[RMDB]
RNA sequence: GGGAACGACUCGAGUAGAGUCGAAAAUGUGCUCCUAAGAGUUAAGCAUGGACCCAGAUUGGUAAAGCUUGAAAAGACACAUAUAUGGAAUUCCUGCAUGCUUGCAGGGGUUACUGCUAGUCUGCCAUGCACAAGGCUUGUUCGCAAGCCUUGUGCAAAAAGAAACAACAACAACAAC
Reactivity to 2A3 in 0.01 (KOAc 150mM, MgCl2 10mM, bicine 150mM(pH8.5), 24C), signal-to-noise 1, nucleotides 027 to 126: u090g010u030g030c010u000c030c030u110a150a050g060a020g150u090u180a090a000g000c040a040u030g030g030a060c000c020c020a040g130a210u140u090g030g040u090a090a110a160g020c030u080u080g180a020a040a040a000g070a030c020a010c040a040u130a010u000a040u120g060g050a010a000u000u040c000c000u000g030c000a120u210g000c050u110u080g000c010a010g000g000g000g000u020u020a080c010u040g080c000u010a020g020u010c010u000g000c010c010a070
Reactivity to DMS in 0.01 (KOAc 150mM, MgCl2 10mM, bicine 150mM(pH8.5), 24C), signal-to-noise 2, nucleotides 027 to 126: u010g010u000g000c030u000c060c050u010a160a220g000a100g010u000u020a080a110g000c010a000u010g010g000a220c110c100c060a130g000a080u010u010g010g030u000a010a160a100g020c070u000u000g010a090a110a070a050g030a040c070a080c050a050u000a190u010a120u030g000g000a010a020u000u000c000c000u000g000c000a040u000g000c240u010u000g000c020a010g000g000g000g000u000u000a050c010u000g020c190u010a050g010u000c030u000g020c030c040a050

An RNA of 177 nucleotides, treated with 2A3 and DMS and read out base by base.
The DMS profile rests on 1,303 reads.
The reactions ran in a buffer of 150 mM KOAc, 10 mM MgCl2 and 150 mM bicine (pH 8.5), at 24 C.
DMS adducts were read by reverse transcription with MarathonRT.
Values are in units of 0.01, from 0 to 300, in steps of 10.